[RMDB]
RNA sequence: GGGAACGACUCGAGUAGAGUCGAAAAAUAUUCAGCAAGGGUCUCCAAUGGUGACUCCCCAUUCAAUUUGAGGGACAAUUAGGUCUGCCCCGUGCAAAAAGGUGAUGAGGGUCCUUUGCAAGAAUGGAUUCUCUACCGAAUUCGUUCGGUAGAGAAUAAAAGAAACAACAACAACAAC
Reactivity to DMS in 0.01 (KOAc 150mM, MgCl2 10mM, bicine 150mM(pH8.5), 24C), signal-to-noise 3, nucleotides 027 to 126: a090u000a030u000u010c010a180g000c010a030a040g010g020g010u000c040u010c000c050a090a120u000g010g020u000g010a120c200u000c010c050c020c020a050u000u000c120a090a190u000u000u000g000a170g020g010g010a000c040a050a080u000u010a130g010g000u000c050u000g000c030c000c010c030g010u000g010c110a020a030a030a040a130g010g010u000g000a090u000g000a120g000g000g000u000c000c000u000u000u000g010c050a050a060g020a020a020u010g010g010
Reactivity to 2A3 in 0.01 (KOAc 150mM, MgCl2 10mM, bicine 150mM(pH8.5), 24C), signal-to-noise 1, nucleotides 027 to 126: a000u120a020u030u070c000a000g000c020a050a010g090g000g010u000c050u020c060c010a100a080u080g050g000u070g020a050c050u060c000c000c000c000a030u060u080c030a050a220u030u060u170g040a120g020g000g000a010c000a040a120u230u160a090g160g040u000c040u020g000c000c000c000c000g090u080g010c090a080a060a040a030a020g080g020u110g020a070u070g000a150g000g020g000u050c000c000u020u000u000g040c010a080a010g000a020a020u030g020g000